Conditions: 150 mM KOAc, 10 mM MgCl2 and 150 mM bicine (pH 8.5), 24 C. This 177-nucleotide RNA was probed chemically with DMS.
[RMDB]
RNA sequence: GGGAACGACUCGAGUAGAGUCGAAAAGAUAUGGAUGAGGAGCGAUAAGAACGUGUCGGAAACGACAUAGUUCUUUUGACGCUCGUAGUCCUAAGUCAAAAGUUAGUCAGCUUCGGCUGACUAACAACAUGAGCGAAACCUUCGGGUUUCGCUCAUGAAAAGAAACAACAACAACAAC
Reactivity to DMS in 0.01 (KOAc 150mM, MgCl2 10mM, bicine 150mM(pH8.5), 24C), signal-to-noise 1, nucleotides 027 to 126: g000a020u000a190u000g000g000a020u000g000a200g000g000a020g040c000g000a150u000a010a040g000a000a020c020g040u000g020u030c000g000g000a060a070a160c010g000a000c010a000u000a020g000u000u000c000u000u000u000u000g020a150c080g020c000u000c000g020u010a300g000u000c010c020u000a060a170g000u000c020a060a100a130a130g020u000u000a000g000u000c000a020g010c000u000u000c230g010g020c020u000g000a000c000u000a000a000c010a120a060
It was measured as part of the RMDB library TTRDEL. DMS adducts were read by reverse transcription with MarathonRT.